RNA sequence: GGGAACGACUCGAGUAGAGUCGAAAAGAGAUGACUUCGGUCAUCUCAAAAAACCGUAGGCCUCUCGUCCCGACAACAGCAACAGUUCGAAAGAGCUGUUGACAUGUCGAAGUCGAGAGGGCCUAAACGGAAAAAAGGGUUAGUUCGCUAACCCUAACGUAACUUGUGAAUUCGUUCACAAGUUACGAAAAGAAACAACAACAACAAC
Reactivity to 2A3 in 0.01 (KOAc 150mM, MgCl2 10mM, bicine 150mM(pH8.5), 24C), signal-to-noise 2, nucleotides 027 to 156: g000a000g010a000u030g010a020c030u060u100c250g040g000u000c000a000u020c010u020c010a010a020a000a000a010a000c030c000g010u010a030g000g000c000c000u000c000u000c000g000u000c010c030c000g000a000c010a130a030c030a060g050c000a000a010c000a000g000u000u000c010g050a120a090a050g000a050g000c000u000g000u000u000g050a080c000a020u060g000u000c000g010a150a000g040u020c000g000a000g000a020g000g000g000c000c010u000a010a040a000c010g000g060a060a050a060a020a010a030g010g020g000u010u010a000g010u070u090c240g000c140u000a000a000c000c000c000u010a030a010
Reactivity to DMS in 0.01 (KOAc 150mM, MgCl2 10mM, bicine 150mM(pH8.5), 24C), signal-to-noise 2, nucleotides 027 to 156: g000a040g000a010u000g010a010c020u000u000c300g050g040u000c000a020u030c000u020c000a020a030a070a080a080a070c030c000g050u000a050g000g000c010c000u000c010u000c010g020u000c060c040c040g010a020c000a030a110c160a230g020c000a020a020c000a010g040u000u000c000g000a200a080a270g020a020g040c010u000g000u000u000g000a030c080a300u000g000u000c010g010a050a090g000u000c020g020a000g020a050g000g020g020c000c050u010a010a080a100c000g000g000a000a050a030a110a140a000g010g000g010u010u010a010g000u000u000c300g000c040u010a070a020c000c000c000u010a000a050